Structure probing data (DMS and 2A3) for a 207-nucleotide construct. For DMS, 6,768 sequencing reads were counted. 2A3 adducts were read by reverse transcription with SuperScript II with manganese. Conditions: 150 mM KOAc, 10 mM MgCl2 and 150 mM bicine (pH 8.5), 24 C. Values cover nucleotides 27 to 156.
RNA sequence: GGGAACGACUCGAGUAGAGUCGAAAAGGGUGAUGUCUCCUAACCUUUAUCAAUGGGGGCACUCGGUCGUGCUGUGGGUAGAAAUUUUAUUUCGUGCCUACCUUAGACGCUCGUCGUCGGGAGUAUGUGGGACUGAUGAACUUCGGUUCAUCAGUAAACUGAAGAUCAGAUUCGUCUGAUCUUCAGUAAAAGAAACAACAACAACAAC
Reactivity to DMS in 0.01 (KOAc 150mM, MgCl2 10mM, bicine 150mM(pH8.5), 24C), signal-to-noise 2, nucleotides 027 to 156: g020g020g020u030g010a080u010g010u010c020u000c000c020u000a140a110c050c040u010u000u020a150u000c120a080a100u000g020g030g030g020g020c010a070c030u000c020g010g020u000c030g010u000g000c040u000g070u010g010g020g030u000a300g000a020a050a060u000u000u000u020a110u010u020u000c010g000u010g010c010c010u000a040c020c060u000u010a120g010a060c030g020c050u000c150g040u000c020g010u000c030g000g000g010a150g000u000a060u000g020u000g000g020g010a060c000u000g000a010u010g000a010a020c020u010u000c300g060g000u000u000c010a000u010c000a020g010u000a010a080
Reactivity to 2A3 in 0.01 (KOAc 150mM, MgCl2 10mM, bicine 150mM(pH8.5), 24C), signal-to-noise 5, nucleotides 027 to 156: g070g000g000u080g040a100u040g030u020c010u040c000c000u030a090a150c020c010u140u270u140a210u170c100a090a120u140g000g000g000g010g020c000a020c010u020c030g030g020u010c020g040u030g040c060u060g000u050g020g010g000u010a020g100a010a030a020u140u250u150u160a170u070u110u060c040g060u120g010c000c010u010a020c010c000u030u070a050g000a020c010g010c050u140c140g270u090c000g000u000c030g040g020g010a080g030u100a110u210g050u130g000g020g030a000c000u000g000a000u000g000a000a010c010u040u060c220g070g000u010u000c000a010u000c000a000g000u010a010a070